The record gives the reactivity of an RNA of 207 nucleotides to 2A3. For 2A3, 681 sequencing reads were counted. The reactions ran in a buffer of 150 mM KOAc, 10 mM MgCl2 and 150 mM bicine (pH 8.5), at 24 C. For 2A3 the reverse transcriptase was SuperScript II with manganese.
RNA sequence: GGGAACGACUCGAGUAGAGUCGAAAAGAGAAAGAAGUACUUGCGUUACCUCAUGAAAGCGACCUUAGGGCGGUGUAAGCUAAGGAUGAGCACGCAACGAAAGGCAUUCUUGAGCAAUUUUAAAAAAGAGGCUGGGAUUUUGUUCUCAGCAACUAGGCAUUCUCAGGUCGUUCGCGACCUGAGAAUGAAAAGAAACAACAACAACAAC
Reactivity to 2A3 in 0.01 (KOAc 150mM, MgCl2 10mM, bicine 150mM(pH8.5), 24C), signal-to-noise 2, nucleotides 027 to 156: g030a010g060a000a060a020g040a030a030g020u020a050c020u010u020g020c010g000u000u060a040c000c000u010c040a030u210g300a030a010a000g040c010g000a010c000c050u000u000a020g030g000g000c090g090g010u010g000u000a030a040g040c000u010a000a000g010g000a000u000g000a000g000c050a000c000g000c010a000a010c050g010a080a030a000g050g020c020a100u110u030c040u070u050g020a040g000c010a100a140u030u150u080u270a120a150a070a000a000a010g050a000g060g000c000u010g000g020g060a010u160u120u280u300g040u170u030c000u020c000a000g000c000a020a010c010u020a040g010g030